[RMDB]
RNA sequence: GGGAACGACUCGAGUAGAGUCGAAAAAUGUGCGACUGUAGCUAGCUCGUACGUACUGGAUCGAUCCGCGCGAUCCUCAUGUGAGAGACGUACCUAGGAUCCUAGACUAGACAUGCGAGUACUGAUCGAAUGACUAUCCGUUCGCGGAUAGUCAUUCAAAAGAAACAACAACAACAAC
Reactivity to 2A3 in 0.01 (KOAc 150mM, MgCl2 10mM, bicine 150mM(pH8.5), 24C), signal-to-noise 4, nucleotides 027 to 126: a010u160g010u040g030c050g070a110c110u110g070u160a030g050c050u040a030g020c020u010c020g010u010a020c020g010u020a170c030u030g060g010a090u040c030g020a030u000c040c040g060c000g000c010g140a250u030c000c010u010c050a210u300g200u210g070a060g000a010g010a040c010g000u020a080c000c040u040a050g040g040a010u000c010c020u030a020g010a050c010u000a000g000a020c020a030u080g030c020g010a000g010u020a080c040u060g030a100u090c060
Reactivity to DMS in 0.01 (KOAc 150mM, MgCl2 10mM, bicine 150mM(pH8.5), 24C), signal-to-noise 3, nucleotides 027 to 126: a090u010g000u000g000c030g000a070c080u010g000u000a110g010c130u020a100g000c100u000c050g030u000a000c070g000u000a100c050u010g000g010a060u000c070g000a070u010c060c080g010c120g030c020g000a030u000c020c010u030c060a120u010g030u000g010a100g000a110g010a080c070g000u000a060c070c100u010a110g000g000a040u000c040c040u000a100g000a070c010u000a050g000a080c080a060u010g000c020g000a070g010u010a060c090u000g010a120u010c160
An RNA of 177 nucleotides, treated with 2A3 and DMS and read out base by base. Source: RMDB library OK2TRN, as collected in RNAgym. The DMS profile rests on 2,932 reads.